[RMDB]
RNA sequence: GGGAACGACUCGAGUAGAGUCGAAAAGUUUGGGUGGGGCGCCACUCCCCCGAAAAGGUAUCGGGGGAGCCCAAAGGUCGGCUCAGGCGGGUCAGAAAUCCGCCGUAGAGUGCAAGGGCAAAAGCCGACGUAAAGAGUUGUUCGCAACUCUUUACGUAAAAGAAACAACAACAACAAC
Reactivity to DMS in 0.01 (KOAc 150mM, MgCl2 10mM, bicine 150mM(pH8.5), 24C), signal-to-noise 4, nucleotides 027 to 126: g010u000u000u000g020g030g040u020g000g010g020g020c070g000c050c070a280c020u000c010c010c000c010c000g020a010a090a180a150g010g020u040a070u000c010g020g000g010g000g000a010g000c090c040c030a050a070a080g010g000u010c050g010g000c010u000c040a180g010g000c000g000g010g010u020c110a110g000a130a130a060u010c000c000g010c000c000g000u010a070g000a070g020u030g000c090a110a120g000g000g010c070a060a080a070a080g010c040c030g000
Reactivity to 2A3 in 0.01 (KOAc 150mM, MgCl2 10mM, bicine 150mM(pH8.5), 24C), signal-to-noise 3, nucleotides 027 to 126: g030u020u050u070g050g010g010u110g030g040g000g010c040g000c030c000a030c010u020c010c000c000c000c000g010a030a010a040a030g300g050u260a090u100c000g010g000g000g000g000a000g000c020c000c000a040a020a000g000g010u100c020g030g000c010u000c000a010g000g000c020g020g000g030u010c030a020g100a040a180a000u010c000c000g000c000c020g000u040a040g010a000g030u050g060c060a050a060g060g000g000c050a060a080a050a030g060c010c000g000

The data come from the RNA Mapping Database (RMDB), libraries RFM100 and RFMREP. The record gives the reactivity of an RNA of 177 nucleotides to DMS and 2A3. The reactions ran in a buffer of 150 mM KOAc, 10 mM MgCl2 and 150 mM bicine (pH 8.5), at 24 C.